Description
The record gives the reactivity of an RNA of 177 nucleotides to DMS and 2A3.
[RMDB]
RNA sequence: GGGAACGACUCGAGUAGAGUCGAAAAUGGCAAAUGUAUUGGCCUAUUUCAUUUGCAAAUGGCUAGACGCUAAGGACAAAAGCGAUAGCUAGCCUGUAAACACCCGUUAAAUCUAAUUAGAUACGUCCAGCAGAAAAGACUUCGGUCUUUUCUGCUGAAAAGAAACAACAACAACAAC
Reactivity to DMS in 0.01 (KOAc 150mM, MgCl2 10mM, bicine 150mM(pH8.5), 24C), signal-to-noise 2, nucleotides 027 to 126: u000g000g030c000a010a000a010u000g000u000a120u000u000g000g030c160c160u020a100u040u000u000c050a000u000u000u020g000c000a080a050a060u010g000g020c000u000a000g050a160c040g000c000u000a050a120g000g000a110c050a060a150a210a000g020c000g000a140u030a130g010c020u020a000g000c060c010u000g060u000a090a140a110c130a050c000c010c000g140u040u000a050a060a060u000c010u000a200a100u000u070a010g000a030u040a110c130g000u000c000
Reactivity to 2A3 in 0.01 (KOAc 150mM, MgCl2 10mM, bicine 150mM(pH8.5), 24C), signal-to-noise 3, nucleotides 027 to 126: u080g060g000c000a010a000a000u020g030u020a090u080u140g120g010c020c030u030a050u030u120u020c000a000u000u010u000g000c000a010a080a160u150g000g020c000u000a000g000a000c020g010c040u120a080a070g220g010a040c050a040a170a040a000g010c000g100a090u020a040g040c000u000a000g000c000c000u000g000u010a030a030a000c080a070c020c000c010g040u040u130a000a140a060u040c040u040a020a150u160u130a180g060a120u080a020c130g020u000c000
Conditions: 150 mM KOAc, 10 mM MgCl2 and 150 mM bicine (pH 8.5), 24 C.